An RNA of 177 nucleotides, treated with 2A3 and DMS and read out base by base.
2A3 adducts were read by reverse transcription with SuperScript II with manganese.
Conditions: 150 mM KOAc, 10 mM MgCl2 and 150 mM bicine (pH 8.5), 24 C.
For DMS the reverse transcriptase was MarathonRT.
RNA sequence: GGGAACGACUCGAGUAGAGUCGAAAACAUCCAGUGUUCGCACUGGAUGAGAGGAAUGUGGAUCGGCAAACUACAUACCAAAAGCUGAGCUCGAAAGUGCAACGAUUUCGUCGUUCGCGACGAAAAAUUACCUUAUGGUAUUCGUACCAUAAGGUAAAAAAGAAACAACAACAACAAC
Reactivity to 2A3 in 0.01 (KOAc 150mM, MgCl2 10mM, bicine 150mM(pH8.5), 24C), signal-to-noise 8, nucleotides 027 to 126: c000a000u010c000c000a000g010u000g040u060u090c220g040c090a000c010u010g000g010a000u010g000a020g010a000g020g060a090a050u080g010u050g030g030a080u100c090g120g020c090a050a080a040c040u050a020c030a040u080a060c030c000a030a100a020a010g020c050u050g040a010g030c010u020c040g070a100a040a020g050u050g020c020a070a050c050g060a080u030u020u030c010g000u010c010g000u030u050c210g000c000g080a010c010g000a020a000a000a010a000
Reactivity to DMS in 0.01 (KOAc 150mM, MgCl2 10mM, bicine 150mM(pH8.5), 24C), signal-to-noise 8, nucleotides 027 to 126: c010a010u000c000c000a000g010u000g020u000u010c220g020c010a010c000u000g010g000a000u000g000a070g010a110g010g010a090a030u000g020u000g010g010a060u010c060g010g000c090a090a120a090c060u000a040c050a040u000a120c050c020a050a040a080a110g010c040u000g000a120g010c030u000c030g010a050a050a090g010u000g010c050a070a070c110g000a170u010u000u000c000g000u000c000g010u000u010c180g010c020g000a010c010g000a000a010a020a100a120